[RMDB]
This 177-nucleotide RNA was probed chemically with 2A3 and DMS.
RNA sequence: GGGAACGACUCGAGUAGAGUCGAAAAGAUAUGGACUCCAUGGACCUACCGGUCGGAAACGACCGAGUAGGAUGGAAGUGGGUCCUAAGUCAAAAUCAGCUUCUUUAGUUCGCUAAAGAAGCUGAAACAACCAUAUAUUCUUCGGAAUAUAUGGUUGAAAAGAAACAACAACAACAAC
Reactivity to 2A3 in 0.01 (KOAc 150mM, MgCl2 10mM, bicine 150mM(pH8.5), 24C), signal-to-noise 4, nucleotides 027 to 126: g010a000u020a020u070g000g010a010c020u040c200c010a010u020g020g000a030c010c000u000a010c000c000g000g010u000c000g000g010a020a010a010c010g000a000c000c000g010a040g010u000a000g000g000a000u040g010g010a010a020g000u010g010g000g000u000c000c000u000a030a000g010u000c030a000a000a010a300u020c000a000g000c000u000u000c000u000u010u010a010g020u050u080c290g010c230u010a010a000a000g000a000a000g000c000u000g000a000a000a000
Reactivity to DMS in 0.01 (KOAc 150mM, MgCl2 10mM, bicine 150mM(pH8.5), 24C), signal-to-noise 6, nucleotides 027 to 126: g000a020u000a130u010g000g000a010c010u010c000c010a010u000g010g000a060c000c000u000a000c000c000g000g010u000c000g010g000a040a030a070c000g010a010c000c000g010a060g020u000a010g010g010a150u000g010g000a170a210g020u000g000g010g000u000c000c000u000a010a090g000u000c010a100a070a120a130u000c000a000g010c000u000u000c000u000u000u000a010g010u000u010c250g000c000u000a000a010a010g000a010a010g010c000u000g000a000a040a150

Background:
The RNA was probed in 150 mM KOAc, 10 mM MgCl2 and 150 mM bicine (pH 8.5) at 24 C. For 2A3, 23,671 sequencing reads were counted.